The record gives the reactivity of an RNA of 177 nucleotides to 2A3 and DMS. For 2A3 the reverse transcriptase was SuperScript II with manganese. Conditions: 150 mM KOAc, 10 mM MgCl2 and 150 mM bicine (pH 8.5), 24 C. In probing experiments dimethyl sulfate is read out at A N1 and C N3, which are open when not base-paired.
RNA sequence: GGGAACGACUCGAGUAGAGUCGAAAAUUGCAGCACAAAGGUGUUUACAUAAGUAAUACCUUGAUAUACUUAUGAUAUGGCUAUUGAACGGUGUAUGCUCAGUGCCUGCAGCUUACGGUUGAGCACGAUUUUACUGAUCGUUCGCGAUCAGUAAAAUAAAAGAAACAACAACAACAAC
Reactivity to 2A3 in 0.01 (KOAc 150mM, MgCl2 10mM, bicine 150mM(pH8.5), 24C), signal-to-noise 2, nucleotides 027 to 126: u050u050g000c010a010g040c020a000c030a040a080a040g080g000u040g050u080u090u060a030c020a020u120a140a050g010u050a070a050u020a040c000c000u020u040g010a010u020a010u000a120c010u060u050a040u100g050a010u040a080u130g140g000c020u070a090u070u060g080a080a020c040g030g000u060g010u050a080u080g000c030u060c100a030g000u010g040c010c030u020g000c000a010g040c000u070u100a060c060g120g000u020u070g020a000g020c010a000c070g020
Reactivity to DMS in 0.01 (KOAc 150mM, MgCl2 10mM, bicine 150mM(pH8.5), 24C), signal-to-noise 5, nucleotides 027 to 126: u000u000g020c030a050g010c030a050c040a070a060a100g000g000u000g000u000u000u000a070c010a090u010a050a060g000u010a020a050u000a030c040c070u010u010g000a110u000a060u010a050c050u000u000a050u000g000a120u000a040u010g010g020c130u010a090u010u010g000a060a090c130g010g000u000g010u000a030u000g010c030u000c070a140g020u000g010c110c030u000g010c020a030g020c090u000u010a110c120g020g000u000u000g010a090g010c060a100c140g000